Overview:
An RNA of 207 nucleotides, treated with 2A3 and read out base by base. The RNA was probed in 150 mM KOAc, 10 mM MgCl2 and 150 mM bicine (pH 8.5) at 24 C.
[RMDB]
RNA sequence: GGGAACGACUCGAGUAGAGUCGAAAAUGAAUAUUCGUAUUCACCAUCGGGGUCAGAGCAAUGGGAGUGCGAUAAGUAACUGAAGCCUCCACGGUUACUUUUGACGCACGAGGAUCAGCUCUGACGGAGGCACCCACAUUACUCAAUUCGUUGAGAAGCCACAAGAACUAUUCGUAGUUCUUGUGGCAAAAGAAACAACAACAACAAC
Reactivity to 2A3 in 0.01 (KOAc 150mM, MgCl2 10mM, bicine 150mM(pH8.5), 24C), signal-to-noise 3, nucleotides 027 to 156: u090g010a030a010u020a040u040u150c210g010u020a000u020u050c080a040c090c040a090u230c200g130g010g100g030u000c010a000g010a010g000c040a220a300u120g010g000g000a030g000u000g000c010g100a070u040a150a030g010u000a000a000c010u010g040a110a020g020c000c000u000c000c000a010c000g010g000u010u000a000c000u000u090u150u210g300a080c040g000c020a030c060g000a260g010g010a000u010c000a010g030c000u000c010u000g000a000c000g000g010a000g000g000c000a010c000c010c000a070c020a080u150u220a100c020u060c040a050a090u290u050c100g080u140u150g050a050g000a190a020